[RMDB]
RNA sequence: GGGAACGACUCGAGUAGAGUCGAAAAUCGAUGCUCCACCAAGAUGCAAUGCUGUUACUAAGGUAGCAAUUAGCGAUAGUACAAUCACUGCUCGAAAAGCUAAAGUUAUCGCCAAUAUGGCUCGGGCAACAGGUGUAAGUUUCGACUUACACCUGUUAAAAGAAACAACAACAACAAC
Reactivity to 2A3 in 0.01 (KOAc 150mM, MgCl2 10mM, bicine 150mM(pH8.5), 24C), signal-to-noise 6, nucleotides 027 to 126: u060c020g030a030u070g020c020u020c020c010a050c010c010a060a020g060a090u090g030c030a030a090u080g040c020u030g040u080u020a060c050u070a110a070g100g000u020a020g040c000a040a100u050u030a040g000c010g010a010u020a040g080u070a050c080a050a020u070c040a050c150u050g010c000u030c040g090a060a090a030a020g040c040u070a110a020a060g040u060u050a040u080c040g000c030c010a090a040u150a110u210g020g000c000u000c030g000g000g000c010
Reactivity to DMS in 0.01 (KOAc 150mM, MgCl2 10mM, bicine 150mM(pH8.5), 24C), signal-to-noise 7, nucleotides 027 to 126: u010c050g020a100u010g010c020u000c030c040a100c070c060a080a110g010a090u010g010c060a080a090u010g010c060u010g020u000u000a050c060u000a070a090g020g010u010a050g010c050a090a090u000u000a050g000c010g010a030u000a020g030u010a050c140a100a070u010c110a100c140u000g020c020u000c030g000a090a080a100a080g010c030u010a050a070a120g010u010u010a030u000c080g010c010c030a050a070u010a090u000g010g000c030u000c060g010g010g010c080
An RNA of 177 nucleotides, treated with 2A3 and DMS and read out base by base. For 2A3, 9,125 sequencing reads were counted. The RNA was probed in 150 mM KOAc, 10 mM MgCl2 and 150 mM bicine (pH 8.5) at 24 C.